Structure probing data (2A3) for a 207-nucleotide construct. The reactions ran in a buffer of 150 mM KOAc, 10 mM MgCl2 and 150 mM bicine (pH 8.5), at 24 C.
[RMDB]
RNA sequence: GGGAACGACUCGAGUAGAGUCGAAAACGCUUCUGUUUCAGUGUUACUGAGAUUAAAGAUCCAAAACAAUUUUGUUACCGAAACACCGGGGGAUCCAUCUAGGUCCUUCUGCUCACCUCACAGAAAGCCAAUCACUGAGACAACAAGUAUUGCCAAGACAACCCUUACGUUUCGACGUAAGGGUUGUAAAAGAAACAACAACAACAAC
Reactivity to 2A3 in 0.01 (KOAc 150mM, MgCl2 10mM, bicine 150mM(pH8.5), 24C), signal-to-noise 3, nucleotides 027 to 156: c050g000c010u020u000c040u020g000u000u000u000c020a010g000u030g040u100u090a100c080u140g100a030g040a100u040u150a180a060a020g040a030u040c020c050a020a100a040a000c060a130a110u140u220u210u300g030u050u100a060c000c040g100a110a200a050c120a100c150c060g030g030g020g010g000a010u000c020c020a020u010c050u090a080g040g050u130c040c080u010u040c010u020g000c020u050c050a170c040c040u090c020a060c000a030g040a000a040a000g000c020c060a010a030u070c000a010c010u000g000a010g000a010c000a010a000c010a000a000g020u030a080u050u190g030c010c000a080a000g100